[RMDB]
RNA sequence: GGGAACGACUCGAGUAGAGUCGAAAAGCUUCCGUCGAACGCGAAAAUCGGACGGCGGCCAUGAGUCGCAACGCAAAGCCGCGGCAAGUGGAGUUAGCGAGAAGAGACUAGGCUUUGGUUUCUUCAAAUUAGUGAGUGUGGUUCGCCACACUCACAAUCUUAUUCCGUACUUCGGUACGGAAUAAGAAAAAGAAACAACAACAACAAC
Reactivity to 2A3 in 0.01 (KOAc 150mM, MgCl2 10mM, bicine 150mM(pH8.5), 24C), signal-to-noise 4, nucleotides 027 to 156: g000c000u060u030c010c000g010u000c000g000a060a020c010g010c030g090a070a030a030a110u200c000g020g010a000c010g020g000c000g010g000c000c000a010u020g000a000g010u000c000g020c020a060a110c070g050c140a170a150a040g050c090c050g010c030g010g000c000a020a010g000u010g010g040a070g040u090u100a080g060c070g050a080g030a150a020g090a010g030a010c020u030a040g040g000c000u040u030u030g030g040u010u000u010c000u030u030c030a030a080a140u130u100a050g000u000g000a010g000u020g000u000g040g050u010u040c210g060c050c000a000c000a000c010u000c000a000c000a000a000
Reactivity to DMS in 0.01 (KOAc 150mM, MgCl2 10mM, bicine 150mM(pH8.5), 24C), signal-to-noise 2, nucleotides 027 to 156: g060c000u000u000c000c040g050u000c000g000a040a240c010g020c020g000a160a140a130a080u020c010g000g000a250c000g010g000c020g020g000c050c020a040u000g000a300g000u000c000g020c000a030a040c030g000c050a100a190a220g000c040c000g020c010g000g010c020a010a300g010u020g020g000a150g000u000u000a060g040c000g010a170g030a080a030g000a120g000a010c030u010a130g020g000c040u000u000u000g000g000u000u010u000c010u010u000c000a060a040a070u010u010a150g000u000g010a060g010u010g030u020g000g000u000u000c270g040c000c000a000c000a000c000u000c000a000c010a040a040